[RMDB]
RNA sequence: GGGAACGACUCGAGUAGAGUCGAAAAGAUAUGGAUUCCUUGUCAGCGGUUUGAAGUAUUCGGAAACGAAUAUACUUCGGCUGCUUGGAUUUAGGAAUCCUAAGUCAAACAGGUGUUCGCACCUGAAGUUUCUUAUGUCGUUCGCGACAUAAGAAACAAAAGAAACAACAACAACAAC
Reactivity to 2A3 in 0.01 (KOAc 150mM, MgCl2 10mM, bicine 150mM(pH8.5), 24C), signal-to-noise 2, nucleotides 027 to 126: g010a040u040a050u220g010g000a030u000u020c000c000u000u000g030u010c000a000g000c000g210g090u020u300u300g050a000a020g000u000a010u000u020c010g010g040a040a050a040c020g030a030a020u230a040u010a130c000u000u000c000g030g010c000u000g010c000u000u120g130g020a050u300u300u060a000g010g000a000a000u000c000c000u000a070a040g020u050c040a080a070a040c040a020g020g000u050g020u200u230c300g010c060a020c000c000u040g050a110a040
Reactivity to DMS in 0.01 (KOAc 150mM, MgCl2 10mM, bicine 150mM(pH8.5), 24C), signal-to-noise 1, nucleotides 027 to 126: g010a000u000a300u000g000g000a000u010u000c000c020u010u000g010u000c020a020g020c010g000g010u000u000u030g040a000a010g010u000a060u000u020c000g000g000a130a040a200c000g000a010a050u000a060u000a020c020u000u000c020g000g020c000u000g000c020u020u000g020g010a030u000u010u000a000g020g010a010a020u000c000c000u000a030a070g020u000c020a050a130a200c030a010g010g010u000g000u000u000c230g020c020a040c000c010u010g000a030a060